[RMDB]
RNA sequence: GGGAACGACUCGAGUAGAGUCGAAAAAUUAGGUUUAGUCAUGAAUAUGGAUGUUAGUCUCCAUAGACAUAGGCUCUCUCUUAAGGAGUUGAUGAUGUAUGCCGCUGAUCCAGCCAUGCACAUUGCCGAGGCGGACGGUUCGCCGUCCGCAAAAGAAACAACAACAACAAC
Reactivity to DMS in 0.01 (KOAc 150mM, MgCl2 10mM, bicine 150mM(pH8.5), 24C), signal-to-noise 2, nucleotides 027 to 129: a130u000u000a030g000g020u000u070u000a070g000u020c010a040u010g020a050a300u000a050u020g030g000a020u040g030u000u050a200g000u000c060u020c010c030a080u030a020g000a190c030a030u000a080g030g030c030u010c020u040c080u000c020u010u050a060a030g100g030a160g030u030u060g020a050u020g040a160u000g040u030a010u030g030c000c060g020c050u010g000a030u020c000c000a030g030c070c000a000u020g010c110a060c100a060u040u030g060c120c040g000a040g000
Reactivity to 2A3 in 0.01 (KOAc 150mM, MgCl2 10mM, bicine 150mM(pH8.5), 24C), signal-to-noise 2, nucleotides 027 to 129: a000u080u070a000g000g100u050u060u120a010g010u000c020a040u020g120a120a030u100a000u000g020g000a080u050g020u190u190a120g060u000c000u000c020c000a000u000a000g010a000c010a010u110a110g000g000c030u010c000u020c000u000c010u090u160a110a020g070g010a100g030u080u070g040a080u040g030a030u010g010u070a020u100g030c140c000g040c090u000g020a160u060c110c080a000g000c010c000a000u070g000c000a030c000a050u030u220g000c010c000g010a110g000